The record gives the reactivity of an RNA of 177 nucleotides to 2A3 and DMS. Source: RMDB library OK2TRN, as collected in RNAgym. 2A3 is a SHAPE reagent: it acylates the 2'-hydroxyl of flexible nucleotides of all four kinds.
RNA sequence: GGGAACGACUCGAGUAGAGUCGAAAAACCGCAAGGCGACCGGCACCAUCAAGGCCGUGGACCUGUGGCUGAUGCAGAAUGCCCUGGAUGAAGCGCGCUUGCGCGGCGACGAGUUCAACGCGCGCCAAAUAGGUACUACGUUCGCGUAGUACCUAUUAAAAGAAACAACAACAACAAC
Reactivity to 2A3 in 0.01 (KOAc 150mM, MgCl2 10mM, bicine 150mM(pH8.5), 24C), signal-to-noise 5, nucleotides 027 to 126: a010c030c010g020c060a030a100g030g010c010g040a040c020c000g000g020c030a110c110c010a140u170c070a060a110g080g000c020c010g040u070g020g040a130c010c010u050g000u010g060g000c020u040g020a120u130g050c030a040g060a210a040u100g020c000c000c010u040g040g020a090u120g100a120a050g030c020g000c010g010c040u060u080g000c030g020c010g050g030c020g030a080c030g070a060g050u070u100c020a050a020c050g020c000g000c010g000c020c000a020
Reactivity to DMS in 0.01 (KOAc 150mM, MgCl2 10mM, bicine 150mM(pH8.5), 24C), signal-to-noise 8, nucleotides 027 to 126: a100c030c010g010c110a080a120g020g010c020g010a120c160c030g000g000c040a100c070c070a090u010c200a100a130g010g010c020c020g010u010g000g000a100c040c020u000g010u000g010g010c020u000g010a130u000g010c050a050g010a090a070u010g010c010c010c010u000g010g020a120u010g000a100a120g020c040g020c020g010c050u000u000g010c100g010c020g000g000c150g000a110c060g010a080g010u010u000c050a040a100c120g020c030g010c010g000c020c100a050
For 2A3 the reverse transcriptase was SuperScript II with manganese.
The 2A3 profile rests on 7,384 reads.